[RMDB]
RNA sequence: GGGAACGACUCGAGUAGAGUCGAAAACUCAACAGUCUCCAGCAACUGGGCUGCCAGCACACUAUGGGCGCCUAUUGGGCAAGCCUGCCUCAAAGCUUCCAGUCAGGGAGUGGAGCAUUGUGGGAGAACCGGGAUAUAACUUCGGUUAUAUCCCGGUAAAAGAAACAACAACAACAAC
Reactivity to DMS in 0.01 (KOAc 150mM, MgCl2 10mM, bicine 150mM(pH8.5), 24C), signal-to-noise 2, nucleotides 027 to 126: c010u000c060a150a090c140a110g010u030c030u000c020c040a050g000c080a090a110c150u000g000g000g000c010u020g020c030c050a070g000c100a090c130a100c240u000a060u000g030g040g010c040g010c000c020u000a070u000u000g000g000g000c030a090a120g010c080c050u000g010c050c050u010c090a050a110a140g010c010u000u000c030c000a050g040u030c150a090g000g000g000a110g040u000g000g000a130g020c140a050u000u010g010u000g020g010g020a120g000a120
Reactivity to 2A3 in 0.01 (KOAc 150mM, MgCl2 10mM, bicine 150mM(pH8.5), 24C), signal-to-noise 1, nucleotides 027 to 126: c010u000c010a010a020c000a080g070u000c010u030c020c000a050g020c010a070a080c040u070g020g080g000c040u030g000c000c020a090g020c060a050c020a020c020u200a150u230g080g020g010c000g010c000c020u100a240u100u200g070g000g000c030a070a040g040c010c060u100g000c040c000u050c070a070a040a030g010c000u020u020c030c000a120g000u160c010a010g000g070g030a060g060u060g010g010a020g040c020a040u000u050g000u020g070g040g010a100g010a020